[RMDB]
RNA sequence: GGGAACGACUCGAGUAGAGUCGAAAAAUUUAGGGGUUGAAACGCAGUCCUUCCCGGAGCAAGUAGGGGGGUCAAUGAGAAUGAUCUGAAGACCUCCCUUGACGCAUAGUCGAAUCCCCCAAAUACACGGUCAGAAAGGAUUCGUCCUUUCUGACCGAAAAGAAACAACAACAACAAC
Reactivity to 2A3 in 0.01 (KOAc 150mM, MgCl2 10mM, bicine 150mM(pH8.5), 24C), signal-to-noise 2, nucleotides 027 to 126: a010u200u180u190a120g000g000g010g000u040u100g030a030a070a030c160g020c030a030g020u010c000c010u010u000c010c000c010g030g010a020g010c010a040a070g100u040a000g030g000g000g010g030g000u000c010a020a030u110g030a000g160a230a210u300g030a230u070c000u010g080a160a000g000a070c000c010u000c000c000c000u000u000g000a000c000g000c030a040u120a060g060u140c010g000a010a060u000c010c000c000c000c010a020a020a020u120a040c060a010
Reactivity to DMS in 0.01 (KOAc 150mM, MgCl2 10mM, bicine 150mM(pH8.5), 24C), signal-to-noise 1, nucleotides 027 to 126: a240u010u010u000a120g000g000g000g010u030u000g000a000a010a070c060g000c100a120g010u030c060c070u000u000c000c000c000g010g030a120g010c080a060a070g020u000a000g000g020g060g080g000g000u000c000a000a300u000g030a000g000a050a140u100g000a060u000c080u000g000a300a030g000a000c000c000u000c010c000c000u000u000g000a010c140g040c040a020u050a200g000u000c060g080a150a150u000c000c000c000c000c130a040a000a140u080a080c300a180